[RMDB]
RNA sequence: GGGAACGACUCGAGUAGAGUCGAAAAAUGAGAUUCGUCUCAUAAUCUGCGUACUACGAAGAGGUUGUACCUUGCUAAAUGACCUCCCAAAUAGGAGGUCAUGAUGUAUAAGGUCAACUACCCACCUUCGUAUCGCUAUAUGUCCGUUCGCGGACAAUCACUAAGUCACGUUCGCGUGACUUAGUGAAAAAGAAACAACAACAACAAC
Reactivity to DMS in 0.01 (KOAc 150mM, MgCl2 10mM, bicine 150mM(pH8.5), 24C), signal-to-noise 1, nucleotides 027 to 156: a010u080g000a000g010a130u000u010c250g030u000c020u010c020a070u010a080a120u000c070u010g000c000g040u010a060c080u000a000c020g010a030a030g040a110g010g010u010u000g020u000a030c010c000u020u010g020c000u000a240a140a010u000g000a000c000c000u000c010c020c010a050a140a170u040a020g000g000a010g040g040u000c000a000u000g000a120u000g020u010a100u010a040a010g000g010u000c000a080a010c020u000a000c000c010c010a300c210c040u000u010c000g000u000a060u010c010g050c020u000a100u010a100u010g040u000c000c010g020u010u020c250g050c020g000g010a010c040a050a150
Reactivity to 2A3 in 0.01 (KOAc 150mM, MgCl2 10mM, bicine 150mM(pH8.5), 24C), signal-to-noise 4, nucleotides 027 to 156: a000u060g010a020g010a010u080u060c240g080u010c050u020c010a010u110a020a090u090c090u100g010c010g010u100a130c050u000a020c070g000a000a000g030a000g010g010u030u010g020u180a060c010c030u010u000g010c000u060a110a100a000u010g000a000c000c000u040c000c010c040a260a300a200u300a150g000g000a000g000g010u000c000a000u010g000a010u060g050u020a120u060a300a000g000g010u010c030a020a000c000u030a030c050c040c010a150c020c020u000u000c000g010u020a000u290c000g000c000u040a040u040a060u260g010u000c010c020g000u090u100c290g000c030g170g010a000c010a010a050